Record summary:
The record gives the reactivity of an RNA of 177 nucleotides to DMS and 2A3. 2A3 adducts were read by reverse transcription with SuperScript II with manganese. For DMS, 1,528 sequencing reads were counted. In probing experiments dimethyl sulfate is read out at A N1 and C N3, which are open when not base-paired.
RNA sequence: GGGAACGACUCGAGUAGAGUCGAAAAGAGAAGACCUGUCCUAUGCUGCUCCGUGUCUUCUGCUCUACGGGACGACACCACUCCGUGUCGGAGUAUAUGUUCGGCAACGUGCCCACCAACGAGCUUAGUCGACUACGUGAUUCGUCACGUAGUCGACAAAAGAAACAACAACAACAAC
Reactivity to DMS in 0.01 (KOAc 150mM, MgCl2 10mM, bicine 150mM(pH8.5), 24C), signal-to-noise 2, nucleotides 027 to 126: g000a120g000a070a050g000a030c040c130u000g000u000c010c020u000a060u000g020c120u010g000c020u000c000c110g020u000g020u000c010u010u000c000u000g000c050u000c020u000a070c070g000g000g030a100c050g000a070c040a030c240c160a060c040u000c020c070g020u010g020u000c060g000g000a050g000u010a070u000a070u010g000u040u000c010g030g000c040a170a070c080g000u000g000c060c000c010a110c110c080a020a110c140g010a080g000c000u010u010a200
Reactivity to 2A3 in 0.01 (KOAc 150mM, MgCl2 10mM, bicine 150mM(pH8.5), 24C), signal-to-noise 1, nucleotides 027 to 126: g080a010g000a020a040g040a040c020c020u040g090u060c020c020u020a060u090g010c000u050g040c000u010c030c040g020u020g010u000c000u060u040c020u040g020c010u000c010u020a020c010g060g000g040a030c000g000a020c010a030c070c000a050c020u000c030c040g080u080g190u160c130g050g000a010g030u040a080u040a000u180g150u080u090c020g040g070c030a060a060c030g030u050g010c020c020c030a040c020c000a030a050c040g060a030g000c000u020u050a010